[RMDB]
Chemical mapping of a 177-nucleotide RNA with 2A3 and DMS.
The RNA was probed in 150 mM KOAc, 10 mM MgCl2 and 150 mM bicine (pH 8.5) at 24 C.
For 2A3 the reverse transcriptase was SuperScript II with manganese.
RNA sequence: GGGAACGACUCGAGUAGAGUCGAAAAUAUACAUCAGAAGUCAGCACAGCUCCCGACUCGCGGUGUGCGAUGCUACGUCGCGCGAGCGACGUAGCUGCUGUGCAGACGGCUAGCAAAAGCUAGCCAACCGGAUUAUUAUGUUCGCAUAAUAAUCCGGAAAAGAAACAACAACAACAAC
Reactivity to 2A3 in 0.01 (KOAc 150mM, MgCl2 10mM, bicine 150mM(pH8.5), 24C), signal-to-noise 6, nucleotides 027 to 126: u140a010u040a050c070a090u140c060a070g170a300a030g100u020c010a010g000c000a000c000a000g000c010u010c010c020c010g050a030c030u010c000g020c030g150g300u280g080u190g140c000g010a020u050g000c020u020a000c000g000u000c000g000c000g030c040g030a050g000c000g000a000c000g010u000a000g000c000u000g000c000u000g000u000g000c010a000g020a010c030g000g000c000u000a000g000c010a080a180a300a040g000c000u000a000g000c000c000a010a030
Reactivity to DMS in 0.01 (KOAc 150mM, MgCl2 10mM, bicine 150mM(pH8.5), 24C), signal-to-noise 2, nucleotides 027 to 126: u020a040u030a120c130a090u050c110a160g020a230a080g020u000c020a030g010c000a020c000a000g010c000u000c010c010c000g040a110c230u010c000g010c030g000g020u020g040u060g000c030g000a000u010g000c010u000a000c000g030u000c010g050c010g020c300g000a300g080c000g010a050c010g060u000a000g040c010u000g000c010u000g000u000g000c020a100g010a000c020g000g010c000u010a020g030c000a100a040a110a210g000c000u000a010g010c000c000a050a050